[RMDB]
RNA sequence: GGGAACGACUCGAGUAGAGUCGAAAAGUACAUAGGCAGGAGGCACUUACUCCUGAGCUUCAAGUGCUGGGCAUGGCCUUAGUAAAUCUAUUCUGCUCUAGCAUCAGAACUCAUGUCAUCCCAGGGGUAAGAAUCAGAAAUGACCUAAAAUCAAAAACUCCCAAAAUUUAUUCGUAAAUUUUGGGAGAAAAGAAACAACAACAACAAC
Reactivity to 2A3 in 0.01 (KOAc 150mM, MgCl2 10mM, bicine 150mM(pH8.5), 24C), signal-to-noise 2, nucleotides 027 to 156: g000u030a040c060a070u120a040g060g000c040a030g000g060a000g040g060c040a020c040u030u050a030c010u000c030c000u010g000a020g020c040u050u060c090a140a020g000u000g000c000u000g000g000g050c050a070u220g010g000c020c060u050u030a030g040u100a030a020a090u090c010u030a070u100u020c010u000g010c000u020c040u100a030g000c030a010u010c010a050g040a060a010c010u040c030a040u070g080u070c050a060u080c010c000c000a000g000g000g010g010u010a000a000g030a050a090u000c010a000g130a120a050a050u190g020a080c250c260u270a020a010a300a010u300c030a030a030a290a030a040